[RMDB]
RNA sequence: GGGAACGACUCGAGUAGAGUCGAAAAGCAACUCUUCCAGAUGGCAAUGUUGUCAGCAACGUGUACAUGACAUUUAACCCAGAGACGAUCCACGUUUUUGCAAGGAACCAAGCAAAAUGGGAGUACAGAGCACUUUACCAUGUUCUCACAGGGAAGGCUAACGAAAAGUGUUCGCACUUUUCGUUAGAAAAGAAACAACAACAACAAC
Reactivity to DMS in 0.01 (KOAc 150mM, MgCl2 10mM, bicine 150mM(pH8.5), 24C), signal-to-noise 4, nucleotides 027 to 156: g010c030a060a060c020u010c020u000u010c010c030a140g010a110u010g010g000c060a050a100u000g000u000u000g010u000c030a190g020c040a060a060c060g050u010g020u010a100c070a150u010g000a080c050a090u000u000u000a110a130c030c020c020a160g010a160g010a100c040g010a120u000c050c020a080c050g010u000u000u020u010u000g010c010a050a170g030g010a070a150c080c030a050a190g000c050a030a010a070a080u010g010g010g010a100g020u000a110c090a080g000a100g020c030a040c040u000u000u000a100c050c040a060u010g000u000u000c020u010c020a080c060a100g000g010g010a090a090g000g020
Reactivity to 2A3 in 0.01 (KOAc 150mM, MgCl2 10mM, bicine 150mM(pH8.5), 24C), signal-to-noise 6, nucleotides 027 to 156: g030c030a020a080c030u020c010u110u010c020c020a040g040a150u090g030g010c050a070a080u100g040u090u030g040u140c040a020g040c040a040a040c060g040u040g020u090a080c070a120u070g090a020c030a040u090u110u110a070a070c010c020c030a020g020a010g010a090c060g020a020u040c030c010a060c070g000u000u020u010u050u060g030c040a050a040g050g030a070a130c050c020a080a030g030c010a020a020a070a050u050g020g020g000a020g010u010a030c030a050g040a010g050c020a020c050u070u050u050a090c020c010a050u080g040u000u030c030u010c030a040c060a060g030g010g040a010a020g080g000